[RMDB]
RNA sequence: GGGAACGACUCGAGUAGAGUCGAAAAAGAUGGAUCUCAAAUUCCUGACCUUAAAUGAUCCACCUGCCUCAGCCUCCUGAAGUGCUGGGAUUUAUAGGUGUGAGCUGCCACACCCAGCUAGGAGUGACAGCUUCUAAGCUCUUUACAUGUCAAAGCAACUGCUUUUAUGGUUCGCCAUAAAAGCAGUAAAAGAAACAACAACAACAAC
Reactivity to DMS in 0.01 (KOAc 150mM, MgCl2 10mM, bicine 150mM(pH8.5), 24C), signal-to-noise 2, nucleotides 027 to 156: a090g000a110u000g010g000a050u000c020u020c050a040a060a260u020u000c010c030u000g010a190c030c030u030u000a030a110a110u010g010a030u000c030c000a030c010c020u010g000c050c010u000c060a130g010c040c010u000c010c070u020g010a050a080g030u010g030c010u000g020g000g010a060u000u000u010a100u000a050g010g010u010g010u000g000a070g030c000u010g000c000c000a040c010a090c030c020c030a170g030c110u000a090g010g010a120g060u010g000a100c070a110g000c010u000u010c040u000a060a190g010c040u010c000u000u000u020a090c090a130u000g000u000c040a080a070a090g010c030a160
Reactivity to 2A3 in 0.01 (KOAc 150mM, MgCl2 10mM, bicine 150mM(pH8.5), 24C), signal-to-noise 4, nucleotides 027 to 156: a000g080a040u060g010g000a020u010c040u050c060a080a150a090u080u030c050c030u090g100a170c040c040u110u150a090a130a110u100g020a010u030c000c000a010c000c020u060g030c000c000u040c030a000g020c000c010u070c010c030u210g130a130a010g030u060g090c010u000g000g010g010a000u030u220u080a200u100a100g000g000u010g040u050g000a010g000c020u010g000c030c000a050c000a010c010c020c010a010g000c040u060a020g000g010a010g030u040g050a030c030a060g030c000u040u010c020u030a060a030g010c000u030c040u080u150u070a090c060a080u190g130u190c040a050a120a020g050c060a060